[RMDB]
RNA sequence: GGGAACGACUCGAGUAGAGUCGAAAAUAAGACACCUUGCCUAGCCACACCCCCACGGGACUCAGCAGUGAUAAAUAUUAAGCAAUAAACGAAAGUUUGACUAAGUUAUACCUCUUAGGGUUGGUAAACCACUGUGUUGAUUCGUCAACACAGUGGUAAAAGAAACAACAACAACAAC
Reactivity to DMS in 0.01 (KOAc 150mM, MgCl2 10mM, bicine 150mM(pH8.5), 24C), signal-to-noise 2, nucleotides 027 to 126: u010a100a090g000a100c090a050c020c020u000u000g020c050c040u020a090g010c000c050a090c080a160c060c020c030c040c020a060c120g000g000g000a040c040u000c040a060g010c100a060g010u000g020a040u000a090a060a060u010a040u020u020a040a110g000c070a050a080u010a020a020a020c040g020a100a110a120g000u000u010u000g020a150c030u000a020a050g020u000u000a030u000a110c090c040u000c030u010u000a030g010g010g000u000u000g000g000u020a030a100
This 177-nucleotide RNA was probed chemically with DMS. Reactivities are rounded to 0.1 and cut off at 0 and 3. Conditions: 150 mM KOAc, 10 mM MgCl2 and 150 mM bicine (pH 8.5), 24 C. Source: RMDB library OK2TRN, as collected in RNAgym.